[RMDB]
RNA sequence: GGGAACGACUCGAGUAGAGUCGAAAAUGAAAAAUCUGUAAAGGCAUCAUUAAACAGAGAUGAAAAUAGAAUAAUUGAAGAUCCAAUGAUACAACUACUACCGGAAAAGCUGAGAAGAGAAUUGGCUAGGCUAGGUUUAGCUAAGAUGGAAGCAUCAUGCUAAGUGAAAAUUCGUUUUCACUUAGCAAAAAGAAACAACAACAACAAC
Reactivity to DMS in 0.01 (KOAc 150mM, MgCl2 10mM, bicine 150mM(pH8.5), 24C), signal-to-noise 2, nucleotides 027 to 156: u020g000a080a100a020a120a070u010c050u010g000u010a040a120a110g010g010c010a060u000c020a100u020u000a100a080a060c020a060g000a170g020a100u000g000a060a050a100a160u000a090g020a120a080u000a040a080u000u000g010a100a150g010a080u000c010c080a050a100u010g020a150u000a030c040a090a080c050u000a060c020u000a070c020c030g010g010a070a070a060a090g040c060u000g020a040g020a090a100g040a120g000a070a110u000u000g020g060c040u000a050g000g020c020u000a030g030g000u000u000u000a040g020c040u010a000a070g000a100u000g020g000a060a030g100c060a040u000c020a150
Reactivity to 2A3 in 0.01 (KOAc 150mM, MgCl2 10mM, bicine 150mM(pH8.5), 24C), signal-to-noise 2, nucleotides 027 to 156: u070g020a020a000a050a020a040u020c050u050g000u110a030a070a070g050g000c020a040u040c000a020u060u220a060a150a050c050a020g030a010g060a090u080g060a080a090a060a040u110a030g040a030a060u160a160a010u080u080g020a090a000g040a070u050c040c000a030a000u060g040a020u040a090c040a070a010c040u120a010c010u040a040c000c040g000g040a080a050a010a040g020c090u070g030a000g020a110a000g030a020g020a010a100u120u060g010g000c040u030a040g010g010c010u010a010g000g120u020u120u000a010g000c000u000a000a040g000a030u040g020g010a020a020g020c000a010u060c010a010
Chemical mapping of a 207-nucleotide RNA with DMS and 2A3. Conditions: 150 mM KOAc, 10 mM MgCl2 and 150 mM bicine (pH 8.5), 24 C. DMS adducts were read by reverse transcription with MarathonRT.